[RMDB]
The record gives the reactivity of an RNA of 177 nucleotides to DMS and 2A3.
Reactivities are given for positions 27 through 126.
For DMS the reverse transcriptase was MarathonRT.
It was measured as part of the RMDB library M2PK90.
RNA sequence: GGGAACGACUCGAGUAGAGUCGAAAAGUACACCCUCCCUCCCUCCCAAAAGCGCGCAAAUAAAGGGAGGGACUCAGGGAUGAGUAGGCCAAAAGGCCAUAUCCCGAAGUCGCGCGACGGGACAAAACUGAUAAUAAUUGUUCGCAAUUAUUAUCAGAAAAGAAACAACAACAACAAC
Reactivity to DMS in 0.01 (KOAc 150mM, MgCl2 10mM, bicine 150mM(pH8.5), 24C), signal-to-noise 4, nucleotides 027 to 126: g020u010a160c170a190c020c000c020u000c020c000c000u010c010c010c020u000c020c010c010a070a050a120a190g010c020g000c010g010c210a060a070a100u010a020a070a150g020g000g000a010g000g010g000a020c020u000c110a060g020g000g000a080u010g020a060g010u010a110g020g030c000c000a040a090a090a170g010g030c000c000a070u000a080u010c000c000c000g000a060a050g000u000c070g020c000g010c010g000a060c080g000g000g000a050c230a030a030a080a120
Reactivity to 2A3 in 0.01 (KOAc 150mM, MgCl2 10mM, bicine 150mM(pH8.5), 24C), signal-to-noise 4, nucleotides 027 to 126: g030u040a030c030a130c070c000c000u020c000c000c010u000c000c010c010u020c000c000c000a030a120a030a020g020c020g000c010g020c070a070a070a060u170a100a130a030g000g000g000a000g000g000g000a000c010u040c020a030g010g030g010a010u060g000a020g110u290a110g010g000c020c000a110a300a140a260g020g000c010c000a040u080a040u060c000c000c000g010a050a000g040u070c000g010c000g000c000g010a020c020g000g020g010a010c040a010a110a020a040